Chemical mapping of a 177-nucleotide RNA with DMS and 2A3.
Source: RMDB library VIROID, as collected in RNAgym.
RNA sequence: GGGAACGACUCGAGUAGAGUCGAAAACCGAGGGGGGUGGCUUGGACCGUGGAGGACCAGUGGAGCCAUGGGAUGCUCUUCCCGAUUCUGACCUAACUCCUUCCCCCCAAGGGUCGCCCAGGAAUGGACUAGAAUAACGUUUCGACGUUAUUCUAGUAAAAGAAACAACAACAACAAC
Reactivity to DMS in 0.01 (KOAc 150mM, MgCl2 10mM, bicine 150mM(pH8.5), 24C), signal-to-noise 6, nucleotides 027 to 126: c020c000g010a300g000g000g000g000g010g030u010g000g000c090u010u010g020g000a100c030c030g020u000g020g010a250g010g010a090c030c030a080g010u010g000g010a050g010c040c030a110u000g000g010g020a160u000g010c290u010c060u000u000c060c010c020g000a080u000u010c040u000g000a180c030c010u000a200a230c070u000c020c010u010u000c000c000c000c000c010c020a020a190g000g010g000u000c150g010c030c010c010a160g000g010a110a110u000g000g000
Reactivity to 2A3 in 0.01 (KOAc 150mM, MgCl2 10mM, bicine 150mM(pH8.5), 24C), signal-to-noise 3, nucleotides 027 to 126: c010c000g000a020g020g020g000g010g010g010u080g040g000c070u100u140g050g000a090c000c020g040u090g080g150a060g010g000a030c020c010a010g030u060g050g030a010g010c020c050a040u060g020g020g010a040u070g030c030u030c010u130u050c020c010c000g010a030u140u000c000u020g080a060c010c000u020a050a080c010u030c000c000u040u150c000c010c010c000c000c010a010a010g000g000g000u050c080g040c000c000c020a030g050g120a110a180u190g070g050